The data come from the RNA Mapping Database (RMDB), library OK1LIB. Structure probing data (DMS and 2A3) for a 177-nucleotide construct. Reactivities are given for positions 27 through 126. DMS adducts were read by reverse transcription with MarathonRT. The DMS profile rests on 3,476 reads. For 2A3 the reverse transcriptase was SuperScript II with manganese.
RNA sequence: GGGAACGACUCGAGUAGAGUCGAAAACUAUCCUUCCUGGUGUGUUUACAAAUCGCGGAAGGUGCUUUGCACUAAGUUCUUUGAACCCGACAACUACACCAAGACUACCAUUUACGAGACCUGGGGCGACCAUACCCUAUUUCGAUAGGGUAUGGUCAAAAGAAACAACAACAACAAC
Reactivity to DMS in 0.01 (KOAc 150mM, MgCl2 10mM, bicine 150mM(pH8.5), 24C), signal-to-noise 2, nucleotides 027 to 126: c120u010a090u010c000c000u000u020c000c010u010g000g030u000g000u000g000u000u040u000a100c070a120a050a050u010c070g000c130g000g000a120a050g000g010u000g000c060u010u020u000g020c080a040c060u010a070a140g000u030u000c020u020u030u000g030a030a100c000c000c030g000a050c160a040a040c140u000a030c050a040c030c050a010a050g000a080c100u030a070c110c060a120u020u020u020a070c130g000a100g000a060c000c020u000g000g030g000g000c240
Reactivity to 2A3 in 0.01 (KOAc 150mM, MgCl2 10mM, bicine 150mM(pH8.5), 24C), signal-to-noise 8, nucleotides 027 to 126: c020u040a090u090c020c010u030u050c000c020u020g000g060u040g010u010g020u040u120u070a110c100a050a200a060u110c060g000c070g040g060a080a100g050g000u000g010c010u100u130u270g000c020a030c010u050a080a110g080u080u040c050u070u170u200g080a070a080c000c000c000g010a030c020a070a020c040u110a020c010a010c000c010a060a040g030a040c040u070a060c030c020a070u050u070u110a060c070g030a020g040a110c010c030u020g000g000g070g030c040